[RMDB]
RNA sequence: GGGAACGACUCGAGUAGAGUCGAAAAGCUGGACUCAAGCCAGCCCAGAACUGCUAACGGGAAGACAGCUGUUCGGAAGACAGUACGAUGUCAUGUAUAAGCAGGAGUGAGAGUAGCAGACGUGGAAACUGUGGAUGUCGUUCGCGACGUCCACAGUAAAAGAAACAACAACAACAAC
Reactivity to 2A3 in 0.01 (KOAc 150mM, MgCl2 10mM, bicine 150mM(pH8.5), 24C), signal-to-noise 3, nucleotides 027 to 126: g010c000u000g010g020a050c020u030c120a030a020g050c000c000a000g000c000c000c000a050g010a070a030c010u030g000c000u030a100a000c010g050g000g080a060a010g000a030c020a020g000c020u010g040u090u090c020g050g100a010a040g000a000c000a000g010u050a040c060g070a050u120g010u030c020a000u060g040u020a080u040a090a040g000c010a010g000g070a030g020u120g010a100g000a020g010u090a030g040c020a030g040a050c060g060u080g080g040a090a180
Reactivity to DMS in 0.01 (KOAc 150mM, MgCl2 10mM, bicine 150mM(pH8.5), 24C), signal-to-noise 4, nucleotides 027 to 126: g000c000u000g000g000a090c050u020c150a150a130g030c010c050a050g000c020c000c020a080g010a110a080c010u000g000c000u000a090a140c050g020g010g030a070a100g010a050c060a060g000c000u000g000u020u010c010g010g020a130a100g000a030c030a020g000u010a080c140g010a140u010g010u000c010a030u010g010u030a060u010a080a030g010c020a030g000g000a100g000u010g010a110g000a110g020u000a060g000c020a050g010a050c090g020u000g000g010a050a100